[RMDB]
RNA sequence: GGGAACGACUCGAGUAGAGUCGAAAAGAUAUGGACCAGGUGGGAUAGACGAGGAUCGCUCUCGGAAACGAGAGCGGGAGUCUACCACUGGUCCUAAGUCAAACUGUACUGCUUCGGCAGUACAGAAGCCCCUUAAUGAGUUCGCUCAUUAAGGGGCAAAAGAAACAACAACAACAAC
Reactivity to DMS in 0.01 (KOAc 150mM, MgCl2 10mM, bicine 150mM(pH8.5), 24C), signal-to-noise 1, nucleotides 027 to 126: g000a100u000a300u000g000g050a000c010c020a020g060g010u030g020g000g010a230u000a000g020a000c000g030a060g000g010a010u020c020g000c000u000c000u010c000g040g000a090a120a140c000g010a030g000a030g000c000g020g010g010a020g040u000c000u000a070c000c000a060c000u000g010g010u000c000c000u000a000a070g020u000c020a150a120a200c010u010g000u010a020c000u000g010c010u000u020c230g030g020c000a000g000u000a000c000a000g010a110a110
Reactivity to 2A3 in 0.01 (KOAc 150mM, MgCl2 10mM, bicine 150mM(pH8.5), 24C), signal-to-noise 2, nucleotides 027 to 126: g010a030u060a020u120g000g010a010c020c010a130g300g300u210g150g110g090a300u160a150g010a020c010g020a300g130g000a020u040c000g000c010u000c000u010c000g040g000a080a020a020c000g000a000g010a000g000c020g020g000g000a000g020u000c020u000a010c000c010a020c000u000g000g000u020c000c010u010a050a000g020u000c050a010a090a120c000u000g000u000a000c000u000g030c000u020u070c170g140g050c000a010g000u000a000c010a020g010a010a010